[RMDB]
RNA sequence: GGGAACGACUCGAGUAGAGUCGAAAAGUCUCGGAACUUAACCCUAAGUAUACACUGGUCACAUCCCAAGUCUUGCGCGCUUCGGCAGUCAAAUCUACCCUUCGCCUUCUACGUCUGCGUCAUCGUGAAAUACCGCAGACUUCGGUCUGCGGUAUUUAAAAGAAACAACAACAACAAC
Reactivity to DMS in 0.01 (KOAc 150mM, MgCl2 10mM, bicine 150mM(pH8.5), 24C), signal-to-noise 2, nucleotides 027 to 126: g000u000c010u010c080g050g060a120a050c040u000u020a110a120c050c000c020u030a040a090g010u000a120u050a100c040a050c050u040g000g010u000c110a130c140a110u000c010c000c000a050a170g000u000c020u000u000g010c060g010c030g000c000u010u000c090g030g010c050a040g020u000c070a080a010a080u000c040u000a110c030c030c010u030u000c090g010c040c040u000u020c110u020a060c080g000u010c040u010g000c060g010u020c050a060u000c090g000u000g000
Reactivity to 2A3 in 0.01 (KOAc 150mM, MgCl2 10mM, bicine 150mM(pH8.5), 24C), signal-to-noise 2, nucleotides 027 to 126: g010u000c050u050c060g030g020a040a020c030u130u050a100a110c020c020c000u020a110a010g050u060a040u040a060c090a050c010u040g040g040u020c000a030c030a170u070c010c000c000a020a020g070u000c050u010u060g000c010g000c000g000c000u030u010c030g060g000c010a000g000u060c000a080a100a050u130c040u040a080c000c000c000u010u080c040g060c010c000u060u020c030u060a030c000g050u010c070u010g010c000g010u060c020a060u050c000g010u020g070